[RMDB]
RNA sequence: GGGAACGACUCGAGUAGAGUCGAAAAACCCUACGCAACUGGGCGUACUCCUUGCAAUGGACUUUUUACAGUUCCUACUUAUCCGGUUUUAACGCUGUUUUAUUGGCGCAAAGGUUUACGGAUAAACCCUAUAUGUACGCUUCGGCGUACAUAUAGGAAAAGAAACAACAACAACAAC
Reactivity to DMS in 0.01 (KOAc 150mM, MgCl2 10mM, bicine 150mM(pH8.5), 24C), signal-to-noise 6, nucleotides 027 to 126: a070c030c010c000u010a070c100g020c040a130a070c160u010g010g000g010c070g000u000a060c130u020c030c020u000u020g000c100a100a150u000g000g000a080c100u000u010u020u030u010a110c170a130g000u020u010c010c020u000a090c160u010u000a030u000c010c010g000g010u000u000u000u000a110a200c040g000c010u010g020u000u030u020u020a150u050u010g000g010c000g030c140a070a080a140g020g010u000u010u020a050c000g000g010a020u010a010a030a120c190
Reactivity to 2A3 in 0.01 (KOAc 150mM, MgCl2 10mM, bicine 150mM(pH8.5), 24C), signal-to-noise 9, nucleotides 027 to 126: a000c020c000c010u030a020c040g020c030a110a060c130u160g020g090g020c030g020u060a090c050u040c010c020u030u070g050c060a070a110u100g030g010a030c020u090u130u070u100u150a100c110a030g010u060u040c010c010u030a130c040u040u040a010u000c000c000g070g000u020u010u040u060a040a010c000g000c010u010g250u100u140u090u130a130u110u230g020g000c030g000c070a060a090a020g100g000u070u070u050a020c000g000g000a010u020a020a050a050c000